The record gives the reactivity of an RNA of 177 nucleotides to DMS and 2A3. DMS adducts were read by reverse transcription with MarathonRT.

[RMDB]
RNA sequence: GGGAACGACUCGAGUAGAGUCGAAAACUGCUACAGACACAAAUACGCGCAAAUUGAUUUUCACUCCUUCUGGUUUGGGAGAGUUCAUUCCACUUGACAAAGAAGUUAAGGCGCAGAAGUUAGGGUCACCGGAGUGCAAUUUCGAUUGCACUCCGGUAAAAGAAACAACAACAACAAC
Reactivity to DMS in 0.01 (KOAc 150mM, MgCl2 10mM, bicine 150mM(pH8.5), 24C), signal-to-noise 1, nucleotides 027 to 126: c000u000g000c080u030a080c060a030g060a000c100a040c050a010a130a080u040a080c130g000c000g000c000a060a060a190u000u000g010a030u000u000u000u030c060a300c030u000c030c000u000u070c030u000g000g050u010u000u000g020g030g000a060g020a040g050u000u000c160a000u000u000c070c040a280c030u000u000g000a030c060a100a130a080g010a030a130g000u000u000a140a000g000g000c000g000c060a110g000a050a130g020u010u010a060g000g010g000u010c080
Reactivity to 2A3 in 0.01 (KOAc 150mM, MgCl2 10mM, bicine 150mM(pH8.5), 24C), signal-to-noise 2, nucleotides 027 to 126: c050u070g000c000u060a050c010a150g060a060c040a020c030a050a100a060u300a070c090g060c000g000c050a040a000a180u100u210g040a060u050u040u110u020c040a050c050u040c030c000u130u100c000u070g250g000u040u100u120g050g020g000a010g020a050g160u100u040c000a020u040u060c060c000a070c000u040u000g040a050c050a030a160a010g060a030a030g030u010u010a020a000g000g000c000g000c030a110g000a130a000g000u080u100a100g030g050g050u010c030
The DMS profile rests on 1,113 reads.